[RMDB]
RNA sequence: GGGAACGACUCGAGUAGAGUCGAAAACAUGGCUGAUCACGUGCCUGAGGUAUGCCCUCUGACCUCACCAGGGUAACACAGAACCAUCCAUACAGGCCUUGGGCAGCUGGAAAUUUACACUGGUAGCGAGGUAGUACUAUUUCGAUAGUACUACCUCAAAAGAAACAACAACAACAAC
Reactivity to 2A3 in 0.01 (KOAc 150mM, MgCl2 10mM, bicine 150mM(pH8.5), 24C), signal-to-noise 7, nucleotides 027 to 126: c040a100u160g020g000c010u020g020a110u040c020a020c110g070u210g000c000c000u000g000a020g000g030u180a020u080g020c040c050c000u020c020u030g090a070c000c010u050c030a070c040c030a030g030g030g010u070a120a030c100a010c000a110g030a030a010c020c000a020u010c010c000a010u090a250c010a020g010g000c000c000u020u030g010g020g000c000a010g010c000u050g050g050a070a090a030u150u140u070a060c120a030c070u090g140g040u080a030g100c030
Reactivity to DMS in 0.01 (KOAc 150mM, MgCl2 10mM, bicine 150mM(pH8.5), 24C), signal-to-noise 8, nucleotides 027 to 126: c080a150u010g010g020c010u000g010a050u000c030a040c050g010u010g020c010c010u000g010a060g020g010u000a040u000g000c100c070c060u000c040u000g000a080c020c010u000c080a100c220c230a110g010g010g000u000a090a080c220a250c070a050g010a050a070c230c020a050u000c010c020a100u000a200c070a040g000g010c040c010u000u000g000g000g010c030a030g000c030u000g000g010a050a090a100u010u000u010a050c100a080c110u000g000g020u010a090g010c270